[RMDB]
RNA sequence: GGGAACGACUCGAGUAGAGUCGAAAAGGAAGUCUGUAGAAUUACUGUUAAAUUCCCUUAUCUGCAGACUAUGAAGUAGAGAUCUAAGGGAAUAAGGUAGGAAUUGGUCUCUACUAUGAGGGUUCUCUGAAUUCCUACCUUAAACGCGUACAGAGAACCCAGUAACAUACGUCGUACGCGUUUAAAAAUCUCAUCGACGUAUGUAGUAAGUUAGUGUGAUGAGAUUUUAAGGAGAGGAACACACUAGCUAAAUGGUUGAGAAACCUAAUUCAGUAUUCGUACUGAAUAAAAGAAACAACAACAACAAC
Reactivity to DMS in 0.01 (KOAc 150mM, MgCl2 10mM, bicine 150mM(pH8.5), 24C), signal-to-noise 1, nucleotides 027 to 266: g010g000a140a080g000u000c000u000g000u010a020g000a070a240u000u000a080c000u020g010u000u020a020a100a260u000u000c000c010c000u000u020a120u000c000u000g000c000a020g010a020c010u000a080u000g030a110a070g040u000a020g020a060g030a030u000c020u020a030a010g010g000g000a070a110u000a010a070g020g000u000a050g020g010a060a080u020u000g000g000u010c000u000c000u000a010c000u000a050u020g000a110g020g010g050u000u000c000u000c000u000g000a040a050u010u000c000c000u000a060c010c040u020u000a020a050a050c080g000c110g030u000a300c030a000g000a010g020a000a000c010c010c020a180g020u010a100a050c000a000u000a000c000g030u000c010g000u000a030c020g020c030g020u010u000u000a020a120a130a130a050u010c010u030c050a170u000c000g000a000c020g000u010a020u040g010u040a070g020u010a090a020g020u040u030a000g000u000g010u000g000a090u000g010a090g020a030u000u000u020u000a080a100g010g010a120g000a020g020g000a110a180c020a010c000a000c010u000a020g000c020u000a050a030a040u020g000g000u000u000g000a210g010a120a020a030c040c040u000a050
The record gives the reactivity of an RNA of 307 nucleotides to DMS. It was measured as part of the RMDB library POS240.